[RMDB]
RNA sequence: GGGAACGACUCGAGUAGAGUCGAAAACUAACGUUGGCCCAUCACUAAAAAAGUUUUUAGUCUUAGAUAUCUUGCCCCAUCACCAAUUUACAUAGGUAAUUAGACCCACUGGGACAUACGAAGUACAGGAUAAAUUAGAGUAUAAUACAAAUCACUCUACCAUACAAAUCUUCGGAUUUGUAUGGUAAAAAGAAACAACAACAACAAC
Reactivity to 2A3 in 0.01 (KOAc 150mM, MgCl2 10mM, bicine 150mM(pH8.5), 24C), signal-to-noise 1, nucleotides 027 to 156: c130u190a080a020c020g080u050u060g030g000c030c000c030a110u090c030a030c070u090a030a030a000a090a150a210g140u080u090u070u040u010a000g030u080c000u080u070a050g000a190u050a030u110c030u030u050g050c000c030c000c000a000u070c000a000c030c000a030a110u000u020u140a160c000a110u110a070g000g000u000a020a020u130u070a050g060a180c000c020c000a080c000u020g000g020g000a000c030a080u140a150c120g000a060a000g000u000a030c000a000g000g010a050u050a210a040a000u070u060a030g000a000g020u040a080u000a090a260u080a020c000a000a110a000u060c020a000c000u080c000
Reactivity to DMS in 0.01 (KOAc 150mM, MgCl2 10mM, bicine 150mM(pH8.5), 24C), signal-to-noise 1, nucleotides 027 to 156: c020u040a050a110c090g070u010u010g010g040c020c010c010a120u010c000a040c040u020a000a070a050a070a150a240g000u000u000u000u000u040a030g010u000c010u000u000a060g010a170u000a040u010c020u000u000g010c000c000c000c010a090u000c060a060c020c020a050a130u000u030u010a070c050a150u000a040g060g020u000a040a110u010u000a140g000a190c030c020c030a090c190u000g010g030g000a050c020a070u000a160c060g000a100a080g010u000a070c060a060g010g010a090u010a000a030a090u000u000a050g000a090g010u000a040u000a090a140u010a160c050a050a040a130u000c020a050c010u000c020